Description:
The data come from the RNA Mapping Database (RMDB), libraries RFM100 and RFMREP. Structure probing data (2A3 and DMS) for a 177-nucleotide construct.
RNA sequence: GGGAACGACUCGAGUAGAGUCGAAAAAAGUAACUAAAGAGGCUACGAGGAAAGAUAUCCUGAGUACCAUGCGUCAUUAUUCGCGUGGGAAUAUGGGUGGCAUGAACAUCCAACCCUAAAUAUUACUAAGAAUAGGACAUUUCGAUGUCCUAUUCUUAAAAGAAACAACAACAACAAC
Reactivity to 2A3 in 0.01 (KOAc 150mM, MgCl2 10mM, bicine 150mM(pH8.5), 24C), signal-to-noise 5, nucleotides 027 to 126: a020a000g100u070a040a010c040u090a090a090a020g130a030g040g000c020u020a020c100g040a050g030g070a080a070a030g050a110u070a030u090c000c020u020g010a020g020u000a010c020c000a010u030g000c010g020u080c130a230u040u270a060u210u110c030g010c000g010u020g000g010g080a000a000u150a100u050g000g010g030u020g000g010c120a130u140g050a060a020c000a050u020c010c010a020a080c020c000c000u000a010a060a020u250a040u080u080a030c060u010
Reactivity to DMS in 0.01 (KOAc 150mM, MgCl2 10mM, bicine 150mM(pH8.5), 24C), signal-to-noise 4, nucleotides 027 to 126: a070a090g010u010a000a040c080u020a050a090a060g000a090g000g000c050u000a010c080g020a110g000g010a060a090a060g000a110u030a070u000c010c010u010g000a100g000u000a160c000c000a010u000g000c010g030u010c290a120u050u020a130u030u010c000g000c010g040u000g000g010g010a040a060u020a020u040g000g000g020u000g000g010c170a100u010g010a070a060c070a040u000c030c020a060a140c040c000c000u000a040a020a040u030a090u010u010a090c120u010
2A3 adducts were read by reverse transcription with SuperScript II with manganese. For DMS the reverse transcriptase was MarathonRT. Reactivities are given for positions 27 through 126.